The record gives the reactivity of an RNA of 177 nucleotides to 2A3. For 2A3, 460 sequencing reads were counted. The data come from the RNA Mapping Database (RMDB), library OK1LIB.
RNA sequence: GGGAACGACUCGAGUAGAGUCGAAAACUGCUCGAUGAAGCAACCGCCGCUGCCGAAGGCAUGGCGAUGGCCGAGCGCGUGGCGAAAUCCAAGGCCAAAGCCUUCUUCGUCGAUGCCGAUUGCCAUCCACUCGACCCGACUUCGGUCGGGUCGAGUGAAAAGAAACAACAACAACAAC
Reactivity to 2A3 in 0.01 (KOAc 150mM, MgCl2 10mM, bicine 150mM(pH8.5), 24C), signal-to-noise 1, nucleotides 027 to 126: c070u020g020c000u000c030g110a100u000g080a160a000g000c020a100a080c000c070g020c000c040g020c020u070g000c020c000g080a050a160g070g000c160a100u090g000g020c150g000a080u110g140g000c080c050g000a090g000c150g040c000g060u040g080g050c020g030a040a130a000u080c110c020a050a030g000g000c020c000a040a000a040g000c000c050u010u000c000u000u020c010g000u000c000g000a000u150g010c020c020g000a000u000u060g120c020c000a020u170c080